[RMDB]
RNA sequence: GGGAACGACUCGAGUAGAGUCGAAAACGUCCGCCCUCGAAUCUCCCUGAAAAAGAGAAGGAGAAGAAGAAAACAAAGACCACGCGGUCCGGCGUGUACCAUCUGCUCUCUUCUUCAGAGAACAGGACUUAGCAAAGCAGUUCGCUGCUUUGCUAAGAAAAGAAACAACAACAACAAC
Reactivity to DMS in 0.01 (KOAc 150mM, MgCl2 10mM, bicine 150mM(pH8.5), 24C), signal-to-noise 3, nucleotides 027 to 126: c110g040u000c010c040g000c100c010c000u000c000g020a090a200u000c010u000c010c020c000u030g000a030a050a050a090a090g020a110g020a140a070g000g000a050g010a070a050g000a140a120g000a070a040a070a110c140a080a130a040g000a070c110c000a080c110g010c050g020g000u030c160c080g000g000c060g020u020g020u000a100c100c110a080u020c010u010g000c030u000c070u010c000u000u010c040u030u020c030a110g030a120g000a020a030c080a040g000g010a230
Reactivity to 2A3 in 0.01 (KOAc 150mM, MgCl2 10mM, bicine 150mM(pH8.5), 24C), signal-to-noise 7, nucleotides 027 to 126: c030g080u030c010c020g040c000c010c000u040c010g080a070a090u010c040u020c030c000c020u090g070a110a020a010a040a000g120a010g040a080a040g020g060a030g010a010a010g040a050a010g050a020a130a010a020c090a040a170a010g050a030c030c010a010c020g090c040g030g130u090c050c050g040g010c010g010u030g010u040a060c010c040a070u010c010u020g050c010u000c000u000c000u110u010c000u070u020c010a020g020a000g010a070a010c030a050g010g040a030